[RMDB]
RNA sequence: GGGAACGACUCGAGUAGAGUCGAAAAGUUAGGCUCCUCAGGCUCGCGCCGCUGUCGCCGCUGGUUGCGCAGGCGCCUUUUUUGUACGAGCGGUGCGGCCCGCCGGUGCCUGCGUUACCUUGAGCUGAGCCGUAUGCGUCUUCGGACGCAUACGGCUAAAAGAAACAACAACAACAAC
Reactivity to 2A3 in 0.01 (KOAc 150mM, MgCl2 10mM, bicine 150mM(pH8.5), 24C), signal-to-noise 1, nucleotides 027 to 126: g300u200u190a000g000g000c000u000c000c000u000c050a040g060g030c000u000c210g130c000g010c000c000g060c040u190g020u170c090g010c050c000g000c010u080g040g000u040u160g040c090g000c030a110g000g000c000g120c000c020u300u160u110u000u200u160g190u140a240c090g080a000g000c000g000g040u120g010c000g020g010c070c000c000g000c000c010g080g050u010g040c000c000u000g000c000g000u000u000a050c000c000u040u010g090a110g060c100u070g040

The record gives the reactivity of an RNA of 177 nucleotides to 2A3. It was measured as part of the RMDB library OK1LIB. For 2A3 the reverse transcriptase was SuperScript II with manganese. For 2A3, 374 sequencing reads were counted. The reactions ran in a buffer of 150 mM KOAc, 10 mM MgCl2 and 150 mM bicine (pH 8.5), at 24 C.